[RMDB]
RNA sequence: GGGAACGACUCGAGUAGAGUCGAAAACUUACUGAGAGCACAAAGUUUCCCGUGCCAACAGGGAGUGUUAUAACGGUUUAUUAGUCUGGAGACGGCAGACUAUCCUCUUCCCGGUCCCCUAUGCCGGCAGGACAAGAAUGUUCGCAUUCUUGUCCUGAAAAGAAACAACAACAACAAC
Reactivity to DMS in 0.01 (KOAc 150mM, MgCl2 10mM, bicine 150mM(pH8.5), 24C), signal-to-noise 3, nucleotides 027 to 126: c020u000u000a070c050u010g020a170g010a290g000c030a010c010a100a090a100g000u010u000u000c000c000c040g040u010g000c000c080a140a160c070a060g000g010g010a050g020u000g000u000u000a050u010a070a110c140g010g010u010u010u010a060u020u010a010g000u000c010u000g020g010a140g030a080c130g000g000c030a030g000a020c030u000a050u000c060c030u000c090u010u000c040c000c000g020g000u000c050c030c010c060u000a080u010g000c000c040g000g000
Reactivity to 2A3 in 0.01 (KOAc 150mM, MgCl2 10mM, bicine 150mM(pH8.5), 24C), signal-to-noise 1, nucleotides 027 to 126: c010u060u100a050c000u040g030a020g020a000g120c030a010c030a050a120a090g010u030u070u000c040c000c000g000u040g030c000c000a060a060c020a050g040g020g000a040g030u020g050u100u070a140u010a210a060c040g010g060u050u010u080a110u050u030a030g000u000c000u000g020g000a120g030a080c040g090g020c000a000g000a000c000u000a020u030c000c020u020c000u050u010c000c020c000g030g030u040c010c000c010c000u030a050u090g030c000c010g000g000
Description:
This 177-nucleotide RNA was probed chemically with DMS and 2A3. It was measured as part of the RMDB library RFMREP. Values cover nucleotides 27 to 126. 2A3 adducts were read by reverse transcription with SuperScript II with manganese. DMS adducts were read by reverse transcription with MarathonRT. The RNA was probed in 150 mM KOAc, 10 mM MgCl2 and 150 mM bicine (pH 8.5) at 24 C.